[RMDB]
An RNA of 177 nucleotides, treated with 2A3 and DMS and read out base by base. For DMS the reverse transcriptase was MarathonRT. 2A3 adducts were read by reverse transcription with SuperScript II with manganese. The reactions ran in a buffer of 150 mM KOAc, 10 mM MgCl2 and 150 mM bicine (pH 8.5), at 24 C.

RNA sequence: GGGAACGACUCGAGUAGAGUCGAAAAGAUAUGGAUCGACCCAGCGCUGGAAGUAUAUCGGAAACGAUAUAUGGAGGAACUACGCUGGUCGAUCCUAAGUCAAAACAAUGGCCUUCGGGCCAUUGAACGACAACCUUAAGUUCGCUUAAGGUUGUCGAAAAGAAACAACAACAACAAC
Reactivity to 2A3 in 0.01 (KOAc 150mM, MgCl2 10mM, bicine 150mM(pH8.5), 24C), signal-to-noise 1, nucleotides 027 to 126: g000a000u000a000u030g000g000a000u010c000g010a020c030c140c160a020g020c050g000c200u300g110g020a030a000g010u000a000u000a000u010c000g010g000a000a010a000c020g010a000u000a000u000a000u020g000g030a030g060g080a220a090c280u250a020c250g000c020u000g000g010u000c000g000a000u000c000c000u010a000a000g000u020c000a020a010a050a120c020a000a010u000g020g010c020c030u070u030c300g000g000g000c000c000a010u000u010g000a020a040
Reactivity to DMS in 0.01 (KOAc 150mM, MgCl2 10mM, bicine 150mM(pH8.5), 24C), signal-to-noise 3, nucleotides 027 to 126: g000a020u010a120u010g000g000a020u000c000g000a010c230c130c130a000g020c000g020c070u000g030g010a290a210g000u000a000u000a000u000c000g010g010a020a010a070c000g010a010u000a000u000a000u000g000g000a160g000g010a170a100c230u000a070c010g010c000u000g000g000u000c000g000a000u000c000c000u000a000a050g000u000c010a060a080a090a140c010a000a000u000g000g000c010c000u000u010c230g030g010g010c000c000a000u000u000g000a030a130